RNA sequence: GGGAACGACUCGAGUAGAGUCGAAAAGUUUAAAAAUCAUCGGAGCAUGGUGGUAUUUUCCUGUAGUCCCAGCUACACAGGAGCCUGAGGUAGGAAGACCACUUGAGCCCAGGAAGUCAAGGCUGCAGUCAGUUGAAAUAUUCGUAUUUCAACUGACAAAAGAAACAACAACAACAAC
Reactivity to DMS in 0.01 (KOAc 150mM, MgCl2 10mM, bicine 150mM(pH8.5), 24C), signal-to-noise 3, nucleotides 027 to 126: g010u010u000u020a030a090a100a110a060u000c030a060u000c070g000g020a110g020c060a060u010g010g010u000g000g010u000a040u000u000u010u000c010c010u000g020u000a050g000u000c020c020c020a130g000c020u000a070c060a090c170a080g010g010a060g000c070c030u000g010a080g000g000u010a040g010g010a080a050g000a050c040c030a030c030u000u010g010a120g000c030c010c030a070g000g000a050a060g020u000c070a060a070g010g000c020u000g010c160a160
Reactivity to 2A3 in 0.01 (KOAc 150mM, MgCl2 10mM, bicine 150mM(pH8.5), 24C), signal-to-noise 2, nucleotides 027 to 126: g010u010u050u240a090a160a030a000a000u090c050a050u060c080g090g020a070g090c050a060u050g000g000u010g020g010u080a130u100u110u030u030c010c000u020g030u040a020g060u020c010c010c030a000g010c010u040a030c050a000c020a060g030g110a020g040c010c040u070g010a080g050g020u070a070g030g040a010a020g010a020c000c000a000c000u030u060g050a020g020c010c000c010a020g040g050a020a030g020u060c040a040a040g040g000c030u060g000c050a020
The record gives the reactivity of an RNA of 177 nucleotides to DMS and 2A3. Source: RMDB library OK2TRN, as collected in RNAgym. The reactions ran in a buffer of 150 mM KOAc, 10 mM MgCl2 and 150 mM bicine (pH 8.5), at 24 C.